This 177-nucleotide RNA was probed chemically with DMS and 2A3. In probing experiments dimethyl sulfate is read out at A N1 and C N3, which are open when not base-paired. It was measured as part of the RMDB library TTRDEL. For DMS, 5,850 sequencing reads were counted. Values cover nucleotides 27 to 126.
RNA sequence: GGGAACGACUCGAGUAGAGUCGAAAAGAUAUGGAUCUGAACUACGAAGAAGUGGCUCGAUGAAAUCGGAAACGAUGGAGAGCCACGGAUUCGCAGAUCCUAAGUCAAAGGCUGGUUCGCCAGCCAACUCAAUAGGAAGGUUCGCCUUCCUAUUGAGAAAAGAAACAACAACAACAAC
Reactivity to DMS in 0.01 (KOAc 150mM, MgCl2 10mM, bicine 150mM(pH8.5), 24C), signal-to-noise 6, nucleotides 027 to 126: g000a050u020a300u000g000g000a000u000c000u000g000a090a090c100u010a300c030g000a000a010g010a300a270g010u000g010g000c000u000c000g000a130u010g000a050a130a020u000c000g000g000a130a130a180c000g010a010u000g000g010a060g000a020g000c000c000a000c010g000g000a300u000u010c000g000c010a020g000a020u000c000c000u000a040a070g000u000c030a080a120a100g000g010c010u000g000g020u000u010c250g000c000c000a010g010c010c010a030a040
Reactivity to 2A3 in 0.01 (KOAc 150mM, MgCl2 10mM, bicine 150mM(pH8.5), 24C), signal-to-noise 5, nucleotides 027 to 126: g020a010u080a060u150g010g000a000u010c000u000g020a120a140c080u170a070c300g000a010a020g000a050a010g000u000g000g000c000u020c020g300a300u070g050a040a060a010u020c010g020g000a060a030a050c010g000a000u010g000g030a020g000a000g040c000c000a000c000g000g000a000u010u010c000g000c010a000g000a000u010c010c000u010a110a020g030u020c060a150a060a010g010g000c010u000g000g050u070u110c260g070c070c000a000g000c020c000a000a020